RNA sequence: GGGAACGACUCGAGUAGAGUCGAAAAGGUGAUAUUCGUAUCACCGCAACUGGGGUCGUAAGGAGCCUUGGACCCUGAACUACAGCUGAAGCCUCCACGGCUGCAGGCUAGGCUCUAUCGACGGAGGCACCCUGACGCCGAACAUUCGUGUUCGGAAGUCACAAGGUCAAUUCGUUGACCUUGUGACAAAAGAAACAACAACAACAAC
Reactivity to 2A3 in 0.01 (KOAc 150mM, MgCl2 10mM, bicine 150mM(pH8.5), 24C), signal-to-noise 4, nucleotides 027 to 156: g000g000u020g000a010u010a020u050u230c280g010u050a000u020c000a000c000c010g020c040a090a090c090u160g050g020g080g000u030c020g030u090a160a140g100g020a020g020c030c050u190u300g060g010a050c020c000c000u000g020a060a080c070u080a080c080a010g010c000u000g030a070a010g010c000c000u010c010c010a030c010g010g000c000u000g000c000a000g000g010c010u020a010g000g000c000u010c020u040a100u150c030g040a040c040g000g000a010g000g010c010a040c010c010c000u030g060a050c100g010c010c000g000a000a000c000a010u070u140c250g100u070g000u030u000c000g020g000a010a010
Reactivity to DMS in 0.01 (KOAc 150mM, MgCl2 10mM, bicine 150mM(pH8.5), 24C), signal-to-noise 1, nucleotides 027 to 156: g010g050u000g000a040u000a030u010u000c290g000u000a010u000c000a000c000c000g000c040a060a090c040u000g000g000g000g010u010c090g020u000a090a230g020g000a060g020c010c000u020u030g040g000a100c140c030c040u010g010a020a040c000u010a070c000a000g020c020u000g000a020a090g040c020c000u000c030c010a300c060g010g020c000u010g010c010a020g010g010c030u000a070g000g020c000u000c000u010a140u000c120g020a120c080g000g010a040g030g060c050a140c070c050c030u000g000a100c090g000c000c000g020a040a020c010a150u000u000c220g050u000g010u000u000c000g040g000a020a050
This 207-nucleotide RNA was probed chemically with 2A3 and DMS. DMS adducts were read by reverse transcription with MarathonRT. 2A3 adducts were read by reverse transcription with SuperScript II with manganese. Reactivities are rounded to 0.1 and cut off at 0 and 3. 2A3 is a SHAPE reagent: it acylates the 2'-hydroxyl of flexible nucleotides of all four kinds. The RNA was probed in 150 mM KOAc, 10 mM MgCl2 and 150 mM bicine (pH 8.5) at 24 C.